[RMDB]
RNA sequence: GGGAACGACUCGAGUAGAGUCGAAAAACGAUCCGUACGCGGAUCGAGGGUGCUUCCAGCUUCUUUACAGUGCUGCCUUGUUGCAACCAUGUCAAGCAGCAUUGUACAGGGCUAUGAAAGACCCCAACUUCCUGCCCUAAUUCGUUAGGGCAGGAAGAAAAGAAACAACAACAACAAC
Reactivity to 2A3 in 0.01 (KOAc 150mM, MgCl2 10mM, bicine 150mM(pH8.5), 24C), signal-to-noise 8, nucleotides 027 to 126: a000c000g000a000u000c010c000g000u020a040c270g000c020g090g000a000u000c000g000a100g010g030g010u220g110c000u010u010c020c000a000g000c010u300u240c000u000u090u000a000c000a010g000u000g000c000u010g010c020c090u050u060g060u090u150g060c060a100a150c120c080a210u220g070u120c010a010a010g000c000a000g000c000a000u010u010g000u000a000c010a000g010g010g000c000u020a110u170g060a060a020a000g040a030c000c000c010c000a040a040
Reactivity to DMS in 0.01 (KOAc 150mM, MgCl2 10mM, bicine 150mM(pH8.5), 24C), signal-to-noise 2, nucleotides 027 to 126: a110c010g020a010u000c000c000g010u020a110c200g070c000g060g010a020u000c000g030a050g000g000g000u000g000c020u000u000c030c170a020g010c000u020u040c010u000u000u010a010c000a010g010u000g000c010u010g000c180c020u000u030g000u000u010g000c060a090a240c270c280a090u020g010u020c030a010a000g000c000a000g000c000a000u000u000g010u000a000c090a030g010g010g000c020u000a020u000g000a000a010a020g000a110c020c000c020c050a130a160

Annotation: Chemical mapping of a 177-nucleotide RNA with 2A3 and DMS. For 2A3 the reverse transcriptase was SuperScript II with manganese. The RNA was probed in 150 mM KOAc, 10 mM MgCl2 and 150 mM bicine (pH 8.5) at 24 C. DMS adducts were read by reverse transcription with MarathonRT.